[RMDB]
Structure probing data (DMS and 2A3) for a 177-nucleotide construct.
DMS adducts were read by reverse transcription with MarathonRT.
The reactions ran in a buffer of 150 mM KOAc, 10 mM MgCl2 and 150 mM bicine (pH 8.5), at 24 C.
For DMS, 22,003 sequencing reads were counted.
For 2A3 the reverse transcriptase was SuperScript II with manganese.
RNA sequence: GGGAACGACUCGAGUAGAGUCGAAAAGAUAUGGAUAAGGGACCCUUUUGACGGAUCGGGCGAUACAACUCGGAAACGAGUUGUAUCGUCUCUAGCGUGUCCGAUAAGGGUAACUUAUCCUAAGUCACAUUAUGUAUUACUUCGGUAAUACAUAAUGAAAAGAAACAACAACAACAAC
Reactivity to DMS in 0.01 (KOAc 150mM, MgCl2 10mM, bicine 150mM(pH8.5), 24C), signal-to-noise 8, nucleotides 027 to 126: g010a050u000a300u000g000g000a010u000a000a020g000g000g010a030c000c000c000u000u000u010u010g020a250c140g010g000a020u000c050g020g000g010c000g000a010u000a000c000a010a010c000u000c000g010g000a140a120a230c010g010a010g010u000u000g010u000a000u000c000g010u000c000u000c110u010a120g050c230g010u010g020u000c000c010g020a100u010a010a010g000g010g010u000a000a010c000u000u000a010u000c000c000u000a010a070g010u000c040a300
Reactivity to 2A3 in 0.01 (KOAc 150mM, MgCl2 10mM, bicine 150mM(pH8.5), 24C), signal-to-noise 2, nucleotides 027 to 126: g020a020u120a050u200g000g000a010u000a020a000g000g000g030a020c040c000c000u090u110u120u160g300a120c040g000g010a010u040c040g000g000g000c000g000a000u000a000c000a020a000c000u020c010g090g000a110a140a080c000g000a000g000u000u000g000u000a000u010c000g000u000c010u010c000u010a020g050c050g040u240g050u040c000c000g010a010u040a080a010g000g000g010u020a010a000c000u010u010a000u010c000c000u000a090a020g010u000c000a010